[RMDB]
RNA sequence: GGGAACGACUCGAGUAGAGUCGAAAAAGGUAUAUUCCAGCUCUAGUAACAUCAACAUCAUGGACAUAAUUAGAAUAUCCAAGCCUCUCUAGUUCUACCUGAUAUCGACCUGAAUAAUAGAGGUCAAACUUAUCUUCGCAUUCGUGCGAAGAUAAGUAAAAGAAACAACAACAACAAC
Reactivity to 2A3 in 0.01 (KOAc 150mM, MgCl2 10mM, bicine 150mM(pH8.5), 24C), signal-to-noise 2, nucleotides 027 to 126: a000g160g000u170a130u020a080u150u080c050c020a050g000c020u000c000u020a100g020u030a100a040c000a080u090c080a020a050c010a080u120c020a060u100g020g040a020c020a080u120a090a060u190u160a070g060a120a030u080a070u090c020c040a010a000g000c030c010u040c010u060c030u050a040g000u000u000c020u020a110c000c000u030g020a070u040a060u110c080g030a050c000c020u050g080a120a010u200a170a030u060a040g070a020g000g030u000c000a000a010
Reactivity to DMS in 0.01 (KOAc 150mM, MgCl2 10mM, bicine 150mM(pH8.5), 24C), signal-to-noise 2, nucleotides 027 to 126: a030g000g000u000a070u020a190u000u010c020c020a130g010c020u000c060u000a050g000u010a050a100c050a070u000c030a050a070c060a040u000c140a070u000g030g000a080c060a020u010a060a060u040u020a040g010a110a050u000a070u000c040c050a060a140g020c030c030u030c040u020c030u000a050g000u000u000c050u000a060c070c050u010g020a100u000a010u010c090g010a050c000c030u040g030a070a050u000a110a180u000a100g000a070g000g010u000c050a050a060
An RNA of 177 nucleotides, treated with 2A3 and DMS and read out base by base. For 2A3, 1,047 sequencing reads were counted. 2A3 adducts were read by reverse transcription with SuperScript II with manganese. The reactions ran in a buffer of 150 mM KOAc, 10 mM MgCl2 and 150 mM bicine (pH 8.5), at 24 C. It was measured as part of the RMDB library OK2TRN. For DMS the reverse transcriptase was MarathonRT. 2A3 is a SHAPE reagent: it acylates the 2'-hydroxyl of flexible nucleotides of all four kinds.